[RMDB]
The record gives the reactivity of an RNA of 177 nucleotides to 2A3 and DMS.
DMS adducts were read by reverse transcription with MarathonRT.
For DMS, 5,161 sequencing reads were counted.
High DMS reactivity at an A or C suggests that its Watson-Crick edge is free.
For 2A3, 9,278 sequencing reads were counted.
The reactions ran in a buffer of 150 mM KOAc, 10 mM MgCl2 and 150 mM bicine (pH 8.5), at 24 C.

RNA sequence: GGGAACGACUCGAGUAGAGUCGAAAAUUAGGUAAGGUCAUUUUGAUGCUAAGAAUUACCCUAGCAUGUUCAACUCCUUGGCAUGGGAGCAACAUGGAACCUGCCAAGCACAUCAUACCGCACCUUCCGAUACAGGAUGUUUCGACAUCCUGUAUCGAAAAGAAACAACAACAACAAC
Reactivity to 2A3 in 0.01 (KOAc 150mM, MgCl2 10mM, bicine 150mM(pH8.5), 24C), signal-to-noise 6, nucleotides 027 to 126: u170u070a020g020g010u050a050a060g030g020u050c080a060u000u090u120u110g110a110u040g000c030u060a100a020g040a150a170u160u130a160c020c000c010u000a020g020c010a010u030g030u030u080c040a050a040c010u030c040c000u050u050g150g030c100a110u160g070g000g000a070g040c040a020a060c030a100u080g080g010a020a020c000c000u000g010c020c010a030a000g020c020a010c010a050u070c000a010u040a080c000c020g000c010a020c010c000u060u020c040
Reactivity to DMS in 0.01 (KOAc 150mM, MgCl2 10mM, bicine 150mM(pH8.5), 24C), signal-to-noise 5, nucleotides 027 to 126: u010u010a030g020g000u010a050a160g010g010u020c140a090u000u000u000u000g010a070u000g010c030u000a060a080g010a100a130u010u010a110c100c020c040u000a100g030c020a010u000g010u000u000c050a120a080c070u000c060c000u000u000g010g020c140a060u020g010g010g000a030g010c070a040a040c060a030u000g000g010a060a100c040c040u010g000c040c050a070a070g000c110a060c060a040u000c050a040u000a030c060c020g020c260a070c040c020u000u010c090